[RMDB]
Description
Source: RMDB library OK1LIB, as collected in RNAgym. Structure probing data (2A3 and DMS) for a 177-nucleotide construct. The DMS profile rests on 12,312 reads. 2A3 adducts were read by reverse transcription with SuperScript II with manganese. The 2A3 profile rests on 10,361 reads. Values cover nucleotides 27 to 126.

RNA sequence: GGGAACGACUCGAGUAGAGUCGAAAACACAAUCGCGAGUGAAGAGGGCGUUGAUGGCCACUCCGACGGCCUCGACACCCGACCCGUACAGGUGGCGGUAGCGGUCCAAGGUCAACCCGGCGGAGUCCAUCUAACUCUGGUUCGCCAGAGUUAGAUGAAAAGAAACAACAACAACAAC
Reactivity to 2A3 in 0.01 (KOAc 150mM, MgCl2 10mM, bicine 150mM(pH8.5), 24C), signal-to-noise 8, nucleotides 027 to 126: c080a000c030a030a110u140c040g020c050g050a060g090u100g040a090a050g030a120g040g020g010c020g020u010u040g070a170u170g040g010c040c020a050c050u050c030c020g090a090c030g040g020c000c000u000c010g010a010c000a030c010c010c000g030a050c010c000c010g020u120a100c030a090g050g080u070g050g020c010g000g050u050a030g020c040g010g020u020c020c040a080a060g030g010u070c030a030a140c020c010c000g010g000c010g020g020a040g030u010c020
Reactivity to DMS in 0.01 (KOAc 150mM, MgCl2 10mM, bicine 150mM(pH8.5), 24C), signal-to-noise 6, nucleotides 027 to 126: c070a090c140a120a050u020c080g000c030g000a110g030u000g020a070a170g020a130g010g010g000c040g010u000u000g000a050u040g010g010c030c030a110c080u000c140c070g010a070c110g000g010c010c010u010c030g000a100c020a050c020c010c000g000a050c090c020c020g020u010a100c140a100g010g000u020g000g010c090g020g000u000a070g000c050g000g010u010c050c050a080a120g010g010u000c050a080a140c080c040c020g010g000c020g000g000a080g030u020c080